Annotation
The record gives the reactivity of an RNA of 177 nucleotides to 2A3 and DMS. For 2A3, 2,029 sequencing reads were counted. Source: RMDB library TTRDES, as collected in RNAgym. For DMS the reverse transcriptase was MarathonRT. For 2A3 the reverse transcriptase was SuperScript II with manganese. The reactions ran in a buffer of 150 mM KOAc, 10 mM MgCl2 and 150 mM bicine (pH 8.5), at 24 C.
RNA sequence: GGGAACGACUCGAGUAGAGUCGAAAAGAUAUGGACGUGACCUGAGGCAACAGCUACGGUCGGAAACGACCGUAGACAUGCCUUUGGGUACGUCCUAAGUCAAAACCCGUGUGUUCGCACACGGGAAUCCAACUAUUUGCUUCGGCAAAUAGUUGGAAAAAGAAACAACAACAACAAC
Reactivity to 2A3 in 0.01 (KOAc 150mM, MgCl2 10mM, bicine 150mM(pH8.5), 24C), signal-to-noise 1, nucleotides 027 to 126: g020a020u100a050u160g000g000a000c010g000u060g300a080c000c000u030g000a000g020g030c000a130a080c040a300g020c020u000a010c010g000g000u050c040g000g000a090a060a030c010g000a000c000c010g000u020a000g030a010c030a020u010g060c010c000u010u040u030g040g000g000u020a000c010g000u000c000c000u000a000a020g050u000c010a030a030a150a270c000c020c000g010u020g000u000g000u030u140c300g060c230a020c000a010c000g000g000g060a010a020
Reactivity to DMS in 0.01 (KOAc 150mM, MgCl2 10mM, bicine 150mM(pH8.5), 24C), signal-to-noise 1, nucleotides 027 to 126: g000a080u000a300u000g010g000a010c030g000u010g000a020c000c000u000g000a010g000g000c000a020a070c300a220g010c010u000a000c010g010g000u000c000g000g000a160a120a190c030g000a030c000c000g000u000a000g000a040c120a120u020g020c000c000u010u000u000g020g010g010u000a010c010g000u000c000c000u000a010a110g000u020c000a100a030a130a210c000c030c000g010u000g010u000g000u000u030c230g010c000a000c000a010c000g000g010g000a000a000